This 207-nucleotide RNA was probed chemically with 2A3 and DMS.
The 2A3 profile rests on 1,653 reads.
For 2A3 the reverse transcriptase was SuperScript II with manganese.
The reactions ran in a buffer of 150 mM KOAc, 10 mM MgCl2 and 150 mM bicine (pH 8.5), at 24 C.
DMS adducts were read by reverse transcription with MarathonRT.
[RMDB]
RNA sequence: GGGAACGACUCGAGUAGAGUCGAAAAUAACUGUUCCAACAAAUGGAACUGUGCAAUUAUUAAUUCCUGGUUGCACAUACGAUAAUACAUGUUCUCAGAGGGGUUCUGUUAUAGCAAAUGUUUACUUUGCUAAAAAUAAACAGCCUGCUACCAAACAGGUACGUAUAAUGUUCGCAUUAUACGUACCAAAAGAAACAACAACAACAAC
Reactivity to 2A3 in 0.01 (KOAc 150mM, MgCl2 10mM, bicine 150mM(pH8.5), 24C), signal-to-noise 3, nucleotides 027 to 156: u110a030a010c060u090g000u000u000c000c010a040a000c060a070a200a060u060g010g000a010a010c020u020g000u010g000c000a010a010u020u030a050u080u220a210a090u120u080c020c000u040g020g000u010u010g010c030a000c010a030u170a070c090g050a060u090a170a020u150a170c110a070u150g030u110u030c080u020c050a020g050a060g060g070g000g000u170u050c050u000g030u050u040a040u030a040g000c000a000a010a020u050g080u060u120u060a170c110u060u020u020g000c000u060a000a230a000a000a030u210a060a060a020c000a000g040c020c020u050g080c010u110a140c100c000a100a080a100c020a060
Reactivity to DMS in 0.01 (KOAc 150mM, MgCl2 10mM, bicine 150mM(pH8.5), 24C), signal-to-noise 2, nucleotides 027 to 156: u000a010a150c070u000g030u000u000c000c020a070a250c090a120a280a190u000g020g010a010a010c070u000g010u010g030c030a030a000u000u000a090u010u000a100a220u010u000c060c070u000g010g010u020u000g050c000a020c040a070u000a070c060g010a150u000a120a140u000a160c070a100u020g020u000u000c040u010c020a090g010a160g010g020g070g000u000u000c030u000g040u000u000a220u000a020g010c020a030a050a050u020g040u000u010u000a020c060u000u020u020g020c130u000a020a040a010a040a000u000a020a030a000c000a070g000c110c040u000g030c020u000a040c040c040a130a070a120c100a110